[RMDB]
RNA sequence: GGGAACGACUCGAGUAGAGUCGAAAAGGGAAGAAGGGUGUGACACGUGUCUUCGAGGUACUGGAGGAGAGGGCCAGCGGUGAUGAGUUCUGGAGAAUCCUCUUCGAGCCCGAAUGCCUUCAGGUUCGGAAACACACUGAUUCGUCAGUGUGUUUCCAAAAGAAACAACAACAACAAC
Reactivity to 2A3 in 0.01 (KOAc 150mM, MgCl2 10mM, bicine 150mM(pH8.5), 24C), signal-to-noise 2, nucleotides 027 to 126: g080g000g000a020a020g020a030a020g030g030g030u090g040u050g100a040c040a020c130g080u090g030u110c040u070u110c030g040a100g030g050u070a100c030u020g040g040a070g010g000a010g040a030g000g060g020c020c000a030g020c050g030g050u130g040a140u090g020a050g120u130u080c030u050g000g020a110g010a080a070u060c040c010u000c000u000u030c050g000a020g040c000c010c010g010a060a050u100g050c020c000u030u040c040a020g140g000u060u090c040
Reactivity to DMS in 0.01 (KOAc 150mM, MgCl2 10mM, bicine 150mM(pH8.5), 24C), signal-to-noise 3, nucleotides 027 to 126: g030g000g000a090a070g000a080a080g000g030g010u000g030u000g010a090c080a090c130g000u000g000u010c030u000u010c060g010a090g010g020u000a090c050u010g000g020a110g000g000a050g000a130g010g000g010c040c050a040g020c070g020g010u010g010a060u000g000a080g000u010u010c030u000g010g010a110g010a090a150u000c020c030u000c030u000u010c050g000a150g010c020c010c020g000a050a100u000g000c060c020u000u000c070a030g000g000u000u000c120